Chemical mapping of a 177-nucleotide RNA with 2A3.
For 2A3 the reverse transcriptase was SuperScript II with manganese.
The data come from the RNA Mapping Database (RMDB), library OK1LIB.
[RMDB]
RNA sequence: GGGAACGACUCGAGUAGAGUCGAAAAUCGGGGAUCCAUGUGUCUCGCAACUGUGGUAAAUCUGCGGCCUUUUUGGCCAUGUCAUCGCAAACCUCAUUCCGUUUCACGCCACAAUGGCCAAACACAAUGUAGAGCUGACCUUCGGGUCAGCUCUACAAAAAGAAACAACAACAACAAC
Reactivity to 2A3 in 0.01 (KOAc 150mM, MgCl2 10mM, bicine 150mM(pH8.5), 24C), signal-to-noise 1, nucleotides 027 to 126: u070c000g000g000g000g180a040u000c000c000a110u160g000u000g010u040c030u060c060g000c020a110a000c010u000g030u060g150g000u130a000a000a250u050c000u000g000c040g040g000c010c000u110u200u130u140u100g000g000c000c070a000u110g100u000c030a070u090c000g020c060a120a080a120c000c000u080c070a100u110u040c030c040g020u000u000u130c020a030c080g000c000c000a050c010a130a230u290g000g000c000c010a000a030a050c000a000c000a120a160